An RNA of 207 nucleotides, treated with 2A3 and read out base by base.
Source: RMDB library VIROID, as collected in RNAgym.
RNA sequence: GGGAACGACUCGAGUAGAGUCGAAAAAGCGGCGGGUGGGUACCCAGGGUAAAACACAAUUGGUGUUUCCCCGGUAACACCGUGCGGUUCCUGUGGUUCGCCCCGCCAACGCAGAUAGAUAAAGAAAACGAGGAGAAGAAGGAACUCACCUGUCGUCCCUUGAGUACACGUUCGCGUGUACUCAAGGAAAAGAAACAACAACAACAAC
Reactivity to 2A3 in 0.01 (KOAc 150mM, MgCl2 10mM, bicine 150mM(pH8.5), 24C), signal-to-noise 1, nucleotides 027 to 156: a030g070c070g050g010c050g050g100g090u300g100g220g010u000a010c010c030c000a000g000g060g000u010a020a000a020a000c000a020c030a150a280u300u300g090g000u010g000u000u000u000c000c010c010c000g000g020u030a060a000c010a050c080c000g020u060g000c040g000g000u020u010c020c020u070g090u190g040g010u020u030c040g130c040c010c030c000g050c020c000a000a000c000g000c010a000g020a010u090a040g080a030u170a080a100a030g090a060a110a010a000c060g000a010g030g020a010g010a060a030g000a030a050g080g010a020a040c000u010c030a040c050c010u030g020u060c020g010u040c000